[RMDB]
RNA sequence: GGGAACGACUCGAGUAGAGUCGAAAAUUAAAAUGAUCGCAGCUGAAAUGGCGGACGCUAUGGUCUCCCUGACGGGAGGGACUCCAGUCCAAAGAGUCGACUUUCCCACCAUAAGUUUGCCAAAAAACAUUCCUCAAGGGUUCGCCCUUGAGGAAUGAAAAGAAACAACAACAACAAC
Reactivity to DMS in 0.01 (KOAc 150mM, MgCl2 10mM, bicine 150mM(pH8.5), 24C), signal-to-noise 1, nucleotides 027 to 126: u020u000a050a090a160a140u020g020a020u000c030g010c080a110g010c030u000g000a190a060a100u000g000g000c030g010g000a000c010g020c200u000a000u010g000g000u010c000u000c020c000c020u010g090a070c270g010g000g010a000g020g000g000a000c000u000c070c100a150g000u010c050c060a080a160a090g020a020g000u000c010g020a110c220u000u010u000c000c000c000a110c040c020a030u000a020a070g010u010u000u000g000c010c000a000a020a040a060a090a090
This 177-nucleotide RNA was probed chemically with DMS. For DMS the reverse transcriptase was MarathonRT. Reactivities are given for positions 27 through 126.